[RMDB]
RNA sequence: GGGAACGACUCGAGUAGAGUCGAAAAUGCUAUUCGUAGCAGCUCUCACCUUUGUGCUGAACUGCUGUUUGUCAGCUCACAGUUGCCCAUUGGGCAAUGGGUGAGCUUGGAUUUAACAGCAUCCCAGCACUCUGGUUUGUAAACUCUUCGGAGUUAAUACCUAACUCGUUUUCGAACGAGUUAGGUAAAAAGAAACAACAACAACAAC
Reactivity to 2A3 in 0.01 (KOAc 150mM, MgCl2 10mM, bicine 150mM(pH8.5), 24C), signal-to-noise 3, nucleotides 027 to 156: u060g000c020u020a010u070u120c230g110u040a030g000c010a030g020c040u000c000u010c030a020c000c010u010u010u010g000u000g020c000u010g010a140a050c030u010g000c000u000g000u010u010u010g010u010c010a010g010c000u000c000a010c010a020g010u010u020g000c000c070c150a300u280u300g000g020g030c000a020a000u190g180g160g000u010g000a010g000c000u010u050g030g000a000u150u280u270a010a000c000a000g000c000a010u010c040c000c000a000g010c010a010c000u000c000u000g000g010u050u070u130g120u110a070a060a040c000u000c030u070u070c200g110g000a010g010u020u060a110a060
Reactivity to DMS in 0.01 (KOAc 150mM, MgCl2 10mM, bicine 150mM(pH8.5), 24C), signal-to-noise 1, nucleotides 027 to 156: u000g010c020u000a050u000u030c110g050u000a000g080c020a080g060c070u000c010u000c060a070c030c000u000u010u000g030u000g030c000u000g040a020a070c020u000g030c000u000g000u000u000u000g020u000c000a090g040c000u000c000a000c000a300g020u010u000g000c010c000c010a300u000u030g060g030g020c000a010a000u000g000g030g060u000g010a020g010c020u000u000g010g000a060u010u010u010a020a020c030a030g030c010a040u000c030c020c000a020g010c020a020c010u000c030u000g010g020u000u000u020g010u000a060a060a040c010u000c000u000u000c210g010g000a040g000u010u000a080a290